[RMDB]
RNA sequence: GGGAACGACUCGAGUAGAGUCGAAAAAAUGGUACAGCCACUCUAGAAAACAGUUUAACAGUUUCUUACGAAACUAAACAUGCAACUACCAUAUGACCUAGAAAUUGUGCUGUUGGGCAUUUAUCCAAGAUAAAUGAAAACUUAACUCUCACACAAAGACUCAUGAUUUAUUCGUAAAUCAUGAGUCAAAAGAAACAACAACAACAAC
Reactivity to DMS in 0.01 (KOAc 150mM, MgCl2 10mM, bicine 150mM(pH8.5), 24C), signal-to-noise 2, nucleotides 027 to 156: a080a060u000g020g050u000a120c130a170g000c020c040a090c050u000c090u020a100g000a130a090a110a060c030a050g010u000u010u010a090a160c090a040g020u000u000u000c020u010u000a190c280g000a070a050a040c010u010a050a030a020c000a040u020g020c020a090a130c060u000a050c030c000a120u000a040u000g020a140c000c000u010a130g000a090a080a080u000u000g030u000g040c010u010g020u000u000g000g050g040c010a010u000u000u000a010u000c020c110a110a130g010a040u000a000a010a030u000g000a010a070a060a100c030u000u000a060a080c070u000c010u010c050a040c050a100c070a060a090a200
Reactivity to 2A3 in 0.01 (KOAc 150mM, MgCl2 10mM, bicine 150mM(pH8.5), 24C), signal-to-noise 3, nucleotides 027 to 156: a000a010u040g010g000u040a020c050a010g020c020c040a070c060u110c050u070a070g090a050a150a070a030c040a050g020u010u020u070a080a040c070a020g000u070u070u010c030u070u170a050c100g000a000a000a000c000u020a030a050a000c040a020u090g020c020a040a040c060u050a040c000c010a040u040a120u120g070a060c010c000u010a010g070a070a130a060u100u060g010u030g000c040u020g010u030u030g030g000g000c000a000u000u010u020a020u000c050c040a050a070g020a030u030a020a020a010u020g030a070a010a040a030c010u050u090a060a030c020u000c010u080c110a090c300a010c030a020a020a280
Chemical mapping of a 207-nucleotide RNA with DMS and 2A3. For DMS, 3,160 sequencing reads were counted. It was measured as part of the RMDB library OK3TST. For 2A3, 2,235 sequencing reads were counted. The reactions ran in a buffer of 150 mM KOAc, 10 mM MgCl2 and 150 mM bicine (pH 8.5), at 24 C.